[RMDB]
Background: This 177-nucleotide RNA was probed chemically with DMS and 2A3.

RNA sequence: GGGAACGACUCGAGUAGAGUCGAAAAUCAAGCCGUUUCGACGGCUUGAACACUUUAGAGUCCUCAGGGACUACGAUCCAGAGUACGGGAGGAACUCUAAGGCCUAGCCCUGCUUCGGCAGGGCUAAGCUUCAGACUUAAUUCGUUAAGUCUGAAGCAAAAGAAACAACAACAACAAC
Reactivity to DMS in 0.01 (KOAc 150mM, MgCl2 10mM, bicine 150mM(pH8.5), 24C), signal-to-noise 5, nucleotides 027 to 126: u000c000a000a010g000c000c000g010u000u000u010c170g020a040c000g010g010c000u000u000g000a010a090c150a130c020u010u000u000a010g000a010g010u000c000c000u010c010a130g010g020g000a050c010u000a030c070g000a120u010c170c090a180g000a040g000u000a040c040g010g020g010a010g010g000a060a080c000u000c000u000a010a010g000g000c020c020u000a010g000c000c000c000u000g000c000u000u010c200g020g000c000a010g000g000g010c000u000a000a040
Reactivity to 2A3 in 0.01 (KOAc 150mM, MgCl2 10mM, bicine 150mM(pH8.5), 24C), signal-to-noise 9, nucleotides 027 to 126: u020c000a000a000g010c010c000g000u030u030u130c240g110a010c000g010g000c000u000u010g000a000a000c010a000c000u010u010u010a010g000a000g010u010c010c000u010c030a040g180g050g080a020c020u170a160c130g150a190u080c070c070a070g010a030g160u080a050c080g140g160g030a010g000g030a140a090c000u000c000u010a010a000g010g000c010c000u000a000g000c000c000c000u000g010c000u030u060c220g090g000c000a000g010g000g010c000u000a000a000
The reactions ran in a buffer of 150 mM KOAc, 10 mM MgCl2 and 150 mM bicine (pH 8.5), at 24 C. The data come from the RNA Mapping Database (RMDB), library M2PK50.